[RMDB]
Structure probing data (DMS and 2A3) for a 177-nucleotide construct. The 2A3 profile rests on 8,272 reads. The RNA was probed in 150 mM KOAc, 10 mM MgCl2 and 150 mM bicine (pH 8.5) at 24 C. The DMS profile rests on 4,680 reads. For 2A3 the reverse transcriptase was SuperScript II with manganese.
RNA sequence: GGGAACGACUCGAGUAGAGUCGAAAAGAUAUGGAGCUCGGGAGUUCGUGGCUACCCACCUCGGAAACGAGAGGCCACUGAACAUCGAUCGAGCUCCUAAGUCAAAACAAGACCUUCGGGUCUUGAACUAUCAUUGAUUCUUCGGAAUCAAUGAUAGAAAAGAAACAACAACAACAAC
Reactivity to DMS in 0.01 (KOAc 150mM, MgCl2 10mM, bicine 150mM(pH8.5), 24C), signal-to-noise 4, nucleotides 027 to 126: g000a080u000a240u000g010g020a010g000c000u000c000g010g000g000a050g030u000u000c000g020u000g000g010c000u000a100c010c020c070a300c110c000u000c000g000g000a120a100a200c000g000a010g000a120g000g000c000c010a010c000u020g030a000a000c010a130u000c150g010a070u010c000g000a010g000c000u000c000c000u000a010a060g000u010c100a110a070a160a160c010a000a000g000a010c000c000u000u010c230g020g020g000u000c000u000u000g010a090a230
Reactivity to 2A3 in 0.01 (KOAc 150mM, MgCl2 10mM, bicine 150mM(pH8.5), 24C), signal-to-noise 4, nucleotides 027 to 126: g020a010u170a070u300g010g000a000g000c000u010c020g040g040g000a050g000u010u010c010g000u000g010g010c020u050a190c020c070c020a040c010c000u000c010g000g050a080a080a050c020g010a010g010a010g040g000c010c020a000c020u070g000a000a010c010a230u300c030g080a110u030c000g000a000g000c000u000c000c000u000a010a000g010u010c020a000a010a090a150c010a000a000g010a000c000c000u080u120c300g180g000g000u000c000u010u010g000a000a010